Background
An RNA of 207 nucleotides, treated with 2A3 and read out base by base. For 2A3 the reverse transcriptase was SuperScript II with manganese. Reactivities are given for positions 27 through 156. The data come from the RNA Mapping Database (RMDB), library PDB130. The RNA was probed in 150 mM KOAc, 10 mM MgCl2 and 150 mM bicine (pH 8.5) at 24 C. Values are in units of 0.01, from 0 to 300, in steps of 10.

RNA sequence: GGGAACGACUCGAGUAGAGUCGAAAAAUUUUCGGAAGGAGGGAUUUUCGGACCAGGAAUGUCCAGAGAGGUUUCGGGCAUCAGCGAUUGAUUUUGGGAGAACGGAGCCGCCGAGUGAAAUUUGCCCAGAGCAGAGUCGGGAGAAGAGUGGAUCGACCUACAAACAUGUGUUCGCACAUGUUUGUAGAAAAGAAACAACAACAACAAC
Reactivity to 2A3 in 0.01 (KOAc 150mM, MgCl2 10mM, bicine 150mM(pH8.5), 24C), signal-to-noise 1, nucleotides 027 to 156: a000u070u060u050u080c020g020g020a010a020g000g000a000g000g000g000a000u050u070u050u170c050g020g000a040c000c010a040g010g100a120a150u170g000u010c050c020a020g020a000g000a010g090g000u050u090u220c080g040g030g000c010a050u020c020a010g040c020g060a040u070u140g020a030u100u140u180u150g040g000g000a040g000a070a050c040g030g010a010g020c000c020g050c040c010g030a060g000u040g010a100a100a090u060u110u150g000c000c000c000a000g020a000g020c040a010g020a010g030u030c020g000g040g000a040g040a050a060g050a040g020u060g000g010a030u040c010g010a040c000